[RMDB]
RNA sequence: GGGAACGACUCGAGUAGAGUCGAAAAAAUCAGCGUUUUCAAGGGUGAUGAAGGAUAUGAAAACUAUCUAGCCCAUCGGCCUAUUGUCGUCUACGUGAACGGUGAGAUGCUUAACAACGUUGUCCGGCUGGAUACGGAUGAGGGCUGGGCAGAGUUCGCCCCCUAUAACGUUCGCGUUAUAGGGGGCAAAAGAAACAACAACAACAAC
Reactivity to 2A3 in 0.01 (KOAc 150mM, MgCl2 10mM, bicine 150mM(pH8.5), 24C), signal-to-noise 1, nucleotides 027 to 156: a020a000u070c040a020g130c040g000u030u060u130u020c040a070a090g040g000g000u070g030a090u070g080a150a030g040g000a000u000a010u130g250a010a010a150a000c010u020a120u060c010u040a040g040c000c000c010a010u090c000g030g010c000c050u180a210u040u190g010u010c050g000u010c030u070a070c040g020u070g030a080a040c030g070g010u040g000a010g010a030u070g090c020u100u050a210a050c030a060a010c050g170u070u000g000u000c000c010g030g000c010u010g140g020a040u080a200c080g040g000a010u160g010a170g020g010g050c000u000g010g000g010c010a000g010a000g060u110u200c120
This 207-nucleotide RNA was probed chemically with 2A3.
Conditions: 150 mM KOAc, 10 mM MgCl2 and 150 mM bicine (pH 8.5), 24 C.
For 2A3 the reverse transcriptase was SuperScript II with manganese.
Values cover nucleotides 27 to 156.